[RMDB]
RNA sequence: GGGAACGACUCGAGUAGAGUCGAAAAGAUAUGGAAGUAUACUCUCGAUAAGCCUGUUAUCGGAAACGAUAAAGGCUUUUGACGAGAGUACUUCCUAAGUCAAAACACAUCGCUUCGGCGAUGUGAACUUCCUUUCAUACUUCGGUAUGAAAGGAAGAAAAGAAACAACAACAACAAC
Reactivity to DMS in 0.01 (KOAc 150mM, MgCl2 10mM, bicine 150mM(pH8.5), 24C), signal-to-noise 3, nucleotides 027 to 126: g000a010u000a290u020g000g000a020a010g000u000a070u010a070c030u000c000u000c010g000a120u000a030a050g040c010c000u000g010u000u000a000u000c000g010g000a060a040a080c010g030a010u010a030a040a010g000g000c000u000u000u000u000g040a210c140g010a030g010a050g020u000a000c010u000u010c000c000u000a000a080g010u000c040a090a100a190a230c010a010c020a000u000c010g020c010u000u020c240g020g000c000g020a020u000g000u000g010a050a150
Reactivity to 2A3 in 0.01 (KOAc 150mM, MgCl2 10mM, bicine 150mM(pH8.5), 24C), signal-to-noise 2, nucleotides 027 to 126: g000a010u010a030u070g000g010a010a000g020u040a080u040a300c000u000c000u000c040g130a170u070a250a010g030c020c000u110g110u300u040a010u000c020g000g010a050a040a000c010g000a000u010a000a000a040g000g000c010u030u000u020u030g060a030c040g010a000g000a000g000u000a000c000u020u040c010c000u000a050a000g030u010c040a010a010a200a100c020a000c000a010u000c010g000c040u090u140c300g180g000c000g010a000u000g010u000g010a010a010